This 177-nucleotide RNA was probed chemically with 2A3 and DMS.
Values cover nucleotides 27 to 126.
The reactions ran in a buffer of 150 mM KOAc, 10 mM MgCl2 and 150 mM bicine (pH 8.5), at 24 C.
[RMDB]
RNA sequence: GGGAACGACUCGAGUAGAGUCGAAAAGGCACCACCCCUAUGCUCAAUAAACCAAUCAGAUUCGAGUACUUGGCUCCUCCUAUUUGUGGGCGGGACUUUGCAGGGAGAAGUAUAGCGCCCCCUGGCGCACACGUCGAUGGUUCGCCAUCGACGUGUGAAAAGAAACAACAACAACAAC
Reactivity to 2A3 in 0.01 (KOAc 150mM, MgCl2 10mM, bicine 150mM(pH8.5), 24C), signal-to-noise 2, nucleotides 027 to 126: g030g000c030a020c060c010a060c000c000c000c000u030a060u110g000c000u000c030a060a120u150a180a110a090c060c050a080a080u120c040a050g060a170u140u060c030g010a020g030u010a110c030u060u030g100g000c030u030c000c000u000c000c000u100a160u140u110u140g100u110g000g000g030c040g010g010g030a040c000u100u080u120g010c030a030g050g010g060a110g040a080a010g030u100a080u080a210g100c040g010c010c000c010c010c030u020g110g030c040g020
Reactivity to DMS in 0.01 (KOAc 150mM, MgCl2 10mM, bicine 150mM(pH8.5), 24C), signal-to-noise 3, nucleotides 027 to 126: g000g000c060a080c040c030a160c020c010c000c020u000a070u010g000c030u010c070a070a070u000a040a110a110c060c070a040a100u010c110a060g000a120u010u000c070g010a050g000u000a040c070u000u000g000g000c040u000c030c010u000c030c040u000a090u010u000u010g030u000g010g000g020c050g010g010g000a070c040u000u010u000g010c060a070g000g020g030a110g000a060a060g030u020a080u000a070g010c040g000c020c010c050c050c050u000g000g010c090g000

2A3 adducts were read by reverse transcription with SuperScript II with manganese. It was measured as part of the RMDB library OK2TRN. High DMS reactivity at an A or C suggests that its Watson-Crick edge is free. DMS adducts were read by reverse transcription with MarathonRT.